[RMDB]
RNA sequence: GGGAACGACUCGAGUAGAGUCGAAAAGAUAUGGAAUUCUGUUACAUCUAUAAUCGAUGCUCGGAAACGAGCAUCGGUAGAUGGAACAGAGAUUCCUAAGUCAAAGGCCGUGCUUCGGCACGGCCAAGUUAGUGUCUGAGUUCGCUCAGACACUAACAAAAGAAACAACAACAACAAC
Reactivity to DMS in 0.01 (KOAc 150mM, MgCl2 10mM, bicine 150mM(pH8.5), 24C), signal-to-noise 2, nucleotides 027 to 126: g000a060u000a300u010g030g000a040a010u000u000c010u000g010u000u010a040c010a000u000c010u000a070u040a300a130u000c000g000a000u000g020c010u010c010g040g000a100a120a180c020g050a010g000c000a000u010c000g040g010u000a010g000a000u000g000g000a000a010c010a010g010a090g010a010u010u000c000c000u020a010a170g020u030c080a100a220a130g040g010c000c000g020u010g040c000u000u020c300g020g040c010a010c000g010g010c020c000a000a030
Reactivity to 2A3 in 0.01 (KOAc 150mM, MgCl2 10mM, bicine 150mM(pH8.5), 24C), signal-to-noise 1, nucleotides 027 to 126: g040a030u150a140u270g000g000a000a000u030u000c010u020g020u020u010a060c000a000u000c010u040a120u140a300a210u230c020g010a000u000g000c000u000c010g100g010a130a120a190c000g000a010g000c030a000u000c000g010g000u000a000g020a020u040g000g020a020a000c010a010g010a000g010a020u000u000c000c000u010a160a040g080u060c080a050a080a210g030g050c080c000g030u010g040c040u090u170c300g060g000c040a000c030g050g000c000c000a000a000